[RMDB]
RNA sequence: GGGAACGACUCGAGUAGAGUCGAAAAUAAAAGCCAUAGAAAAUGGGGAGCUCGAUGUUACUGUUAUGCGUAUGACUGAUGACACGGGUAUAGCAAUGGCAGAAGCUAUCAAACUAGAUUUAGAGAAUCAGCACUAUGUCUUCGGACAUAGUGCUGAAAAAGAAACAACAACAACAAC
Reactivity to DMS in 0.01 (KOAc 150mM, MgCl2 10mM, bicine 150mM(pH8.5), 24C), signal-to-noise 1, nucleotides 027 to 126: u020a000a100a010a180g000c000c010a030u010a040g000a020a200a170a020u020g000g000g000g000a070g000c000u000c050g140a140u010g000u000u000a020c090u000g000u000u020a000u040g140c240g000u160a080u000g000a030c050u000g000a150u000g000a120c010a040c040g000g000g000u000a000u010a020g000c010a030a060u020g010g010c040a060g000a170a070g020c020u020a050u000c130a000a020a070c250u000a030g000a140u000u010u020a190g010a050g000a070a090
Reactivity to 2A3 in 0.01 (KOAc 150mM, MgCl2 10mM, bicine 150mM(pH8.5), 24C), signal-to-noise 2, nucleotides 027 to 126: u170a030a110a010a000g160c010c020a010u100a140g180a000a120a030a010u070g030g010g100g040a000g000c000u000c020g080a120u100g020u050u000a010c040u000g150u080u010a010u170g280c270g130u270a010u090g020a030c040u080g060a090u110g000a140c010a010c220g000g000g050u120a030u070a050g030c060a070a030u000g000g000c000a050g030a040a000g000c000u010a000u140c050a020a070a160c090u020a100g030a260u110u160u180a070g000a000g040a020a150
Chemical mapping of a 177-nucleotide RNA with DMS and 2A3. The data come from the RNA Mapping Database (RMDB), library OK1LIB. For 2A3, 1,019 sequencing reads were counted. 2A3 is a SHAPE reagent: it acylates the 2'-hydroxyl of flexible nucleotides of all four kinds. DMS adducts were read by reverse transcription with MarathonRT. For 2A3 the reverse transcriptase was SuperScript II with manganese.